Conditions: 150 mM KOAc, 10 mM MgCl2 and 150 mM bicine (pH 8.5), 24 C. This 207-nucleotide RNA was probed chemically with DMS and 2A3. For DMS, 11,546 sequencing reads were counted. It was measured as part of the RMDB library M2RFOK. The 2A3 profile rests on 5,987 reads. Reactivities are rounded to 0.1 and cut off at 0 and 3.

RNA sequence: GGGAACGACUCGAGUAGAGUCGAAAAUACUUAGUACGCGCGUAGUUGCAGGCAUUCCGGGUGCAGCAACUGACGCGGAAGACUUUUCCCAGAGUGUGCGCUUCAACUGCCGUGCUGAGUAGUGCACGAAUUGCACGUACGUUCGCGUACGUGCAAAUACAAUGCAGUGAUUCGUCACUGCAUUGUAAAAAGAAACAACAACAACAAC
Reactivity to DMS in 0.01 (KOAc 150mM, MgCl2 10mM, bicine 150mM(pH8.5), 24C), signal-to-noise 4, nucleotides 027 to 156: u000a030c060u000u000a090g020u000a110c010g020c040g040c020g020u000a050g020u010u000g000c000a200g050g000c020a020u000u000c030c300g020g030g130u000g010c020a300g010c010a020a030c010u000g020a020c000g030c000g010g010a090a150g010a060c130u000u000u000u000c000c010c030a300g010a140g010u000g020u000g010c010g000c020u000u000c050a070a070c070u000g000c140c090g010u000g030c000u010g010a090g010u000a080g050u000g000c020a040c030g020a060a130u000u000g020c010a010c000g000u000a010c000g030u000u000c300g000c040g050u000a020c010g010u000g000c000a000a010a090
Reactivity to 2A3 in 0.01 (KOAc 150mM, MgCl2 10mM, bicine 150mM(pH8.5), 24C), signal-to-noise 6, nucleotides 027 to 156: u100a020c020u020u010a000g020u020a010c020g010c000g000c000g080u010a010g000u000u000g000c050a130g100g000c010a030u110u090c140c210g180g050g040u000g010c020a010g000c000a010a000c010u080g120a050c010g000c000g010g000a030a020g050a020c030u060u040u040u020c000c010c010a010g020a040g060u140g010u010g020c010g000c030u070u100c070a150a100c080u140g070c060c040g020u060g000c010u010g010a010g010u030a020g010u030g000c020a020c030g040a080a090u040u010g000c000a000c000g000u000a000c000g010u020u050c170g000c000g100u000a000c000g000u000g000c000a000a000a000